Structure probing data (2A3) for a 207-nucleotide construct. The data come from the RNA Mapping Database (RMDB), library OK3TST. Reactivities are given for positions 27 through 156. Conditions: 150 mM KOAc, 10 mM MgCl2 and 150 mM bicine (pH 8.5), 24 C.
[RMDB]
RNA sequence: GGGAACGACUCGAGUAGAGUCGAAAAUGGUAAAAGAUAUUGCUUAGUAGAUUAUCGGCAAUUCUUUGGUAAAUUUCUGAGGAACAAAGUGUCAUACUUCGAAGAGUGAAAAGUAAUUGAGUCAUCGAAAGCAUGGAUGCUUGGAAGGUGCUCCAUACGAGGGGAAAAUCUUCGGAUUUUCCCCUCGAAAAGAAACAACAACAACAAC
Reactivity to 2A3 in 0.01 (KOAc 150mM, MgCl2 10mM, bicine 150mM(pH8.5), 24C), signal-to-noise 1, nucleotides 027 to 156: u050g050g000u070a100a060a000a000g000a010u120a030u100u100g000c000u100u040a020g010u000a040g100a180u050u050a080u300c120g040g000c000a000a090u040u020c040u070u020u010g030g030u150a180a300a280u100u300u020c010u010g010a080g110g000a050a020c040a000a100a100g050u030g080u040c040a040u010a120c100u090u150c070g050a100a050g040a000g300u070g000a010a010a010a010g080u120a030a020u100u100g070a000g010u070c030a000u010c010g030a020a020a020g000c000a040u150g090g080a040u150g000c030u000u000g070g000a000a100g000g010u000g000c000u030c030c000a000u300a150